[RMDB]
RNA sequence: GGGAACGACUCGAGUAGAGUCGAAAAUAGGGCUAAGGGUGCUAUGGGCUCUGGGACUCUUCUAGGGUAUAUUCGGGCUAUUACCUCUAUGCGAACUAUGGGAGGGCUGGGUAGGGUCACUAUUGCCGAUAAUUGAAUCGUUCGCGAUUCAAUUAUCAAAAGAAACAACAACAACAAC
Reactivity to 2A3 in 0.01 (KOAc 150mM, MgCl2 10mM, bicine 150mM(pH8.5), 24C), signal-to-noise 2, nucleotides 027 to 126: u020a010g010g000g000c010u050a030a060g000g030g000u060g100c030u040a060u100g080g050g000c000u010c070u070g060g020g020a040c010u050c010u270u020c130u300a050g080g000g020u050a070u010a020u160u160c030g020g010g030c000u040a040u070u050a020c000c000u000c040u050a050u170g030c000g030a040a000c010u010a070u020g000g000g150a230g010g060g080c180u150g010g020g060u070a080g000g000g000u020c020a020c060u140a110u160u270g040c010c070
Reactivity to DMS in 0.01 (KOAc 150mM, MgCl2 10mM, bicine 150mM(pH8.5), 24C), signal-to-noise 2, nucleotides 027 to 126: u010a020g010g010g000c040u010a250a140g000g000g010u000g020c130u010a070u000g010g000g020c030u010c060u000g050g010g000a100c030u010c020u000u000c160u010a050g010g000g020u000a050u000a150u010u010c150g020g000g020c060u000a060u000u010a080c050c010u000c050u000a060u000g000c020g000a020a080c030u000a060u010g000g010g000a110g010g040g040c090u000g010g000g000u000a090g000g000g000u000c060a010c140u000a080u000u000g000c220c060